RNA sequence: GGGAACGACUCGAGUAGAGUCGAAAAGAUAUGGACACGCAGAGAUCCGCAUAUGCGACGAAGAUCCGAAGCUCGGAAACGAGCUUCGGAUCAGAGCAUAUGGGAUCGACGAAGCGUGUCCUAAGUCCAAGGGAAUUAUGUUCGCAUAAUUCCCUUGAAAAGAAACAACAACAACAAC
Reactivity to DMS in 0.01 (KOAc 150mM, MgCl2 10mM, bicine 150mM(pH8.5), 24C), signal-to-noise 4, nucleotides 027 to 126: g020a080u010a300u000g000g010a000c000a020c010g020c000a090g000a260g010a000u000c000c000g010c010a010u000a000u000g000c010g000a250c300g020a170a130g000a020u000c010c010g020a030a000g030c000u000c000g000g010a100a120a210c000g020a020g000c010u010u000c000g000g010a000u000c010a010g000a200g010c000a010u000a000u010g000g010g000a000u000c000g000a100c270g010a140a130g000c000g030u000g000u000c000c000u000a010a100g000u000c050
Reactivity to 2A3 in 0.01 (KOAc 150mM, MgCl2 10mM, bicine 150mM(pH8.5), 24C), signal-to-noise 1, nucleotides 027 to 126: g050a040u170a010u200g020g010a000c000a010c010g000c000a000g070a000g000a070u030c000c040g240c270a010u020a020u000g080c040g150a140c080g160a300a040g010a050u000c000c000g020a000a000g050c010u000c020g030g070a120a060a100c010g000a000g070c000u010u000c020g040g000a000u010c000a000g010a010g010c000a010u000a000u030g000g000g000a000u010c000g000a020c010g010a030a020g000c010g000u000g010u010c000c000u000a010a030g000u000c030